[RMDB]
RNA sequence: GGGAACGACUCGAGUAGAGUCGAAAACACGCGGUCACGCUUAACGACAAAGAGCUCAACGAAGAGUCCAACUUUCCGGCGAUCGUCAAGUUUCUCAGCGAGCAGGUGCUUUCCCGCGCGACGGAGCCACAGACCGCUUAUUCGUAAGCGGUCUGUGAAAAGAAACAACAACAACAAC
Reactivity to DMS in 0.01 (KOAc 150mM, MgCl2 10mM, bicine 150mM(pH8.5), 24C), signal-to-noise 2, nucleotides 027 to 126: c130a080c060g000c000g020g000u000c050a090c060g000c020u010u000a070a090c100g000a060c130a070a090a080g000a120g020c000u020c050a110a070c090g000a170a090g000a060g020u000c010c020a060a060c050u000u000u010c050c050g000g000c070g000a090u060c020g030u000c010a060a050g010u000u010u010c020u000c020a070g030c010g000a020g060c040a110g020g010u040g020c040u010u000u020c070c010c020g000c100g020c080g030a060c030g000g000a170g000c060
Reactivity to 2A3 in 0.01 (KOAc 150mM, MgCl2 10mM, bicine 150mM(pH8.5), 24C), signal-to-noise 5, nucleotides 027 to 126: c050a000c030g010c030g020g020u080c050a030c090g050c020u070u070a070a080c060g090a040c100a040a150a020g070a030g010c000u010c060a060a080c110g110a100a110g020a020g060u030c020c010a050a070c080u060u040u060c020c000g030g010c030g050a120u060c030g090u040c040a000a120g010u000u100u000c040u000c020a010g020c030g040a020g010c020a020g020g040u060g000c020u010u040u040c010c020c000g010c000g000c020g040a040c040g050g060a010g010c010